[RMDB]
Source: RMDB library OK3TST, as collected in RNAgym. An RNA of 207 nucleotides, treated with DMS and 2A3 and read out base by base. The reactions ran in a buffer of 150 mM KOAc, 10 mM MgCl2 and 150 mM bicine (pH 8.5), at 24 C. The 2A3 profile rests on 486 reads. For DMS, 2,397 sequencing reads were counted. DMS adducts were read by reverse transcription with MarathonRT.
RNA sequence: GGGAACGACUCGAGUAGAGUCGAAAAAAGCAUCUCUUAUAGGGCCAGUCUAGUGCUAACAAAUUCCCUUAGUGAUUGCUUGUCUGGGAAAGACUUUAUUUGUACUUUGUUUAUGAAGCUUAGUUUGGUGGAAUAUGAAAUUCUUGACUGGGAUUUCAUGAUACGCAGUUUUCGAACUGCGUAUCAUAAAAGAAACAACAACAACAAC
Reactivity to DMS in 0.01 (KOAc 150mM, MgCl2 10mM, bicine 150mM(pH8.5), 24C), signal-to-noise 1, nucleotides 027 to 156: a020a050g030c020a070u000c020u000c040u000u000a120u000a130g050g010g050c030c070a050g010u000c020u000a100g030u020g010c000u000a070a120c030a060a050a180u000u000c010c010c010u000u000a040g040u010g060a120u010u000g010c020u010u000g020u000c050u000g020g000g010a070a080a160g000a080c040u000u010u000a040u010u000u000g040u000a070c040u000u000u000g010u000u000u010a040u010g000a040a030g020c030u000u000a090g000u000u000u000g020g040u000g020g000a070a110u010a120u000g000a050a030a070u000u000c020u010u010g000a060c080u000g020g010g010a090u000u000u000c030
Reactivity to 2A3 in 0.01 (KOAc 150mM, MgCl2 10mM, bicine 150mM(pH8.5), 24C), signal-to-noise 1, nucleotides 027 to 156: a000a010g060c050a050u020c010u000c020u200u120a140u210a160g000g010g050c030c010a010g000u030c030u090a020g050u030g160c070u090a060a080c100a040a170a120u090u080c000c000c000u000u050a070g010u000g110a150u030u120g050c000u040u070g020u120c030u030g000g120g060a110a140a040g020a050c000u030u150u160a300u120u070u090g050u110a140c020u100u060u070g090u050u130u010a140u130g020a040a020g000c000u050u000a000g060u150u060u050g110g000u030g000g040a020a000u070a030u050g000a020a050a040u070u000c030u070u050g020a020c000u000g020g040g000a030u070u000u000c030